[RMDB]
RNA sequence: GGGAACGACUCGAGUAGAGUCGAAAACGGUGCAGUGCGGUACAUGAUAUGCAUGUAUGGCAUGAGCACUGGAACCGGUCGCAGCACUUUAGUCUAUAGUGCGGCCUUUAGGCAGAAGAUGCGAGACACUUCCUUGCCUCUUCGGGGGCAGGGAAGUAAAAGAAACAACAACAACAAC
Reactivity to DMS in 0.01 (KOAc 150mM, MgCl2 10mM, bicine 150mM(pH8.5), 24C), signal-to-noise 9, nucleotides 027 to 126: c010g020g010u000g020c000a300g010u000g000c000g010g010u000a000c000a010u000g000a240u050a110u050g010c010a000u000g010u000a000u000g000g010c000a000u000g000a130g000c000a000c000u010g000g000a110a130c010c010g010g010u000c010g010c080a180g010c060a050c010u000u000u000a110g010u010c030u000a020u000a020g010u010g010c020g000g000c050c010u000u000u020a020g000g000c000a300g000a030a020g010a090u010g010c000g000a110g000a090c080
Reactivity to 2A3 in 0.01 (KOAc 150mM, MgCl2 10mM, bicine 150mM(pH8.5), 24C), signal-to-noise 9, nucleotides 027 to 126: c010g000g000u000g000c010a010g000u000g000c030g130g010u010a000c000a000u020g090a120u180a080u300g260c000a000u000g010u010a000u020g240g000c000a000u020g010a030g020c000a000c000u000g000g010a010a030c010c000g020g000u010c010g000c100a050g010c020a030c060u040u040u080a070g020u020c030u050a050u040a070g040u060g120c040g030g020c010c000u050u070u040a050g010g000c020a010g020a070a010g060a070u040g010c010g020a030g020a010c040